[RMDB]
RNA sequence: GGGAACGACUCGAGUAGAGUCGAAAACAUGAAGAAGCUAAAAAAGAACUUGAAAAAAUCAAAGCUAGUUUACCUAGUUUAGAAGAGGAAAUUAAGUUCCUUUUACUACCGGUAGAUGAAAAUAACCCAUAUUAUUACGUUUCGACGUAAUAAUAUGAAAAGAAACAACAACAACAAC
Reactivity to 2A3 in 0.01 (KOAc 150mM, MgCl2 10mM, bicine 150mM(pH8.5), 24C), signal-to-noise 3, nucleotides 027 to 126: c020a020u090g040a070a100g040a050a020g050c060u090a080a030a040a060a040a020g010a040a020c010u060u060g050a140a020a010a030a010a020u050c010a050a020a010g000c010u000a010g020u010u050u040a030c020c010u030a030g010u050u070u080a080g020a170a020g010a020g030g040a050a050a030u090u040a080a050g050u020u000c000c010u050u020u000u010a090c020u050a040c000c070g060g010u060a080g030a110u050g090a030a120a030a060u060a020a010c010c020
Reactivity to DMS in 0.01 (KOAc 150mM, MgCl2 10mM, bicine 150mM(pH8.5), 24C), signal-to-noise 5, nucleotides 027 to 126: c070a080u010g010a180a100g010a120a080g010c100u010a000a040a050a040a080a110g010a040a020c020u010u000g000a000a020a080a080a210a100u000c030a060a070a040g010c020u000a020g000u000u000u000a100c200c000u000a020g000u000u000u000a060g020a100a080g000a030g000g000a090a120a050u000u000a030a030g010u000u000c000c010u000u000u000u010a080c050u010a050c150c090g000g010u020a040g010a030u010g000a060a070a060a070u010a110a090c050c020
Chemical mapping of a 177-nucleotide RNA with 2A3 and DMS. The data come from the RNA Mapping Database (RMDB), library OK2TRN.